[RMDB]
RNA sequence: GGGAACGACUCGAGUAGAGUCGAAAAUGGCUGAUUAUUCAGGAAUGACUUGGUACCCCCAUUUGAGUGUACCGACUAUUAAGUUACAGUCAGGCAAGCUGAUUGAUGUUAUUUCUGACGAUGCCAAUCAAUUGACGGUUGGGGAGAGUAUUAAGUCACCAAUUCUUCUCUUCGGAGAAGAAUUGGUAAAAGAAACAACAACAACAAC
Reactivity to 2A3 in 0.01 (KOAc 150mM, MgCl2 10mM, bicine 150mM(pH8.5), 24C), signal-to-noise 1, nucleotides 027 to 156: u000g020g000c030u030g110a160u070u250a170u200u050c000a000g050g000a010a030u000g000a040c000u060u050g010g010u000a000c010c000c000c040c110a130u090u040u220g080a070g000u040g010u000a010c020c040g000a000c000u000a060u300u110a270a010g040u010u050a030c000a000g010u020c000a000g000g090c140a030a030g200c050u000g000a010u000u010g030a030u040g010u050u050a020u030u020u020c000u010g030a030c030g010a000u130g010c020c000a000a020u040c000a010a130u080u110g120a010c090g130g000u040u030g000g010g020g000a110g030a010g010u040a100u110u090a070a050g040u100c000